[RMDB]
RNA sequence: GGGAACGACUCGAGUAGAGUCGAAAACGUACGUGGAGACACGUACGACGAGACUUCGGUCUCGAAUUGCGCCAAGUGGCCCGGCGCGCGCGCGAGGCGUCGGUGGUCGGCGAGCCCACGGACGCAAAAACUCGCGCGUAAAUAAAUAGGGUUACGAGUAUUUGUACAUGUUCGCAUGUACAAAUACAAAAGAAACAACAACAACAAC
Reactivity to 2A3 in 0.01 (KOAc 150mM, MgCl2 10mM, bicine 150mM(pH8.5), 24C), signal-to-noise 2, nucleotides 027 to 156: c010g000u000a000c000g010u010g000g050a050g010a010c010a000c010g000u010a000c000g010a010c000g000a000g000a000c010u090u150c290g080g010u000c000u000c010g010a030a060u120u140g010c000g000c000c020a300a230g010u000g000g020c020c010c000g000g010c000g020c010g000c010g070c000g010c000g010a010g000g020c030g020u030c110g080g000u010g000g000u020c020g000g170c180g040a040g010c010c000c020a000c010g070g010a000c000g000c000a090a100a000a010a010c000u000c000g000c010g020c000g010u010a000a020a010u300a000a010a000u000a000g000g000g000u000u010a000c010g000a020